[RMDB]
RNA sequence: GGGAACGACUCGAGUAGAGUCGAAAAGCUGACAGUAAAGUGAAAGCAAGUCUAUUAAGAAAGUAAAGGAAUAAAGGAGGGCUACUCCAUAGGGAGAGCAGCGGCAUGGGCUGCUUGACUGAGUAGACUCAGUCUGUACUUUCGAGUACAGACUGAGAAAAGAAACAACAACAACAAC
Reactivity to DMS in 0.01 (KOAc 150mM, MgCl2 10mM, bicine 150mM(pH8.5), 24C), signal-to-noise 3, nucleotides 027 to 126: g010c030u000g000a300c040a080g010u000a050a090a170g000u000g000a040a120a050g010c020a100a150g010u010c050u010a070u040u020a050a080g020a110a070a070g010u000a030a050a090g000g010a060a080u010a020a060a060g000g000a030g010g000g000c010u000a030c010u010c010c300a070u000a070g000g000g000a300g000a020g000c000a010g000c020g040g010c220a090u010g010g000g040c010u000g010c010u000u000g000a230c030u000g000a010g000u000a030g000a210
Reactivity to 2A3 in 0.01 (KOAc 150mM, MgCl2 10mM, bicine 150mM(pH8.5), 24C), signal-to-noise 2, nucleotides 027 to 126: g040c020u020g040a000c010a000g040u110a080a160a020g090u040g100a070a000a010g000c030a020a020g050u000c010u040a060u100u170a180a040g020a070a050a000g060u160a110a040a060g090g020a070a080u110a080a140a030g070g020a020g000g000g030c010u010a010c000u010c000c010a020u120a010g010g000g020a020g000a010g010c020a000g010c030g070g020c090a160u120g010g180g000c010u010g000c000u050u010g000a000c010u020g000a010g020u010a000g020a010
About this RNA: The record gives the reactivity of an RNA of 177 nucleotides to DMS and 2A3. The DMS profile rests on 2,007 reads. Conditions: 150 mM KOAc, 10 mM MgCl2 and 150 mM bicine (pH 8.5), 24 C.